[RMDB]
RNA sequence: GGGAACGACUCGAGUAGAGUCGAAAAACCUUGAUAUGGAUUUACUCCGAGGAGACGAACUACCACGAACAGGGGAAACUCUACCCGUGGCGUCUCCGUUUGACGAGUAAGUCCUAAGUCAACAUGCAUGGGUCCUCCUUCGGGAGGACCAAAAGAAACAACAACAACAAC
Reactivity to DMS in 0.01 (KOAc 150mM, MgCl2 10mM, bicine 150mM(pH8.5), 24C), signal-to-noise 1, nucleotides 027 to 129: a200c040c300u120u000g020a000u000a000u010g090g000a050u010u010u000a000c000u000c080c000g000a090g020g000a080g040a060c000g080a000a000c140u090a250c030c050a050c000g000a160a000c260a240g090g090g000g000a040a000a090c010u040c110u010a140c030c300c000g000u000g030g030c000g040u040c000u020c010c000g020u000u020u170g000a070c300g000a000g010u000a000a000g050u060c000c000u000a070a000g000u080c000a000a000c300a160u230g020c160a110u060g000
Reactivity to 2A3 in 0.01 (KOAc 150mM, MgCl2 10mM, bicine 150mM(pH8.5), 24C), signal-to-noise 2, nucleotides 027 to 129: a000c040c000u000u000g000a000u000a000u050g000g000a010u010u010u000a000c000u000c000c000g010a030g000g000a010g020a000c010g020a010a000c060u180a120c180c000a000c000g000a070a030c010a100g000g000g000g000a000a010a000c000u010c000u020a010c030c010c000g000u010g010g000c000g000u020c010u010c000c000g000u060u060u020g000a020c050g030a000g000u000a000a000g020u040c000c000u000a000a000g000u010c000a000a010c030a100u260g110c020a030u110g090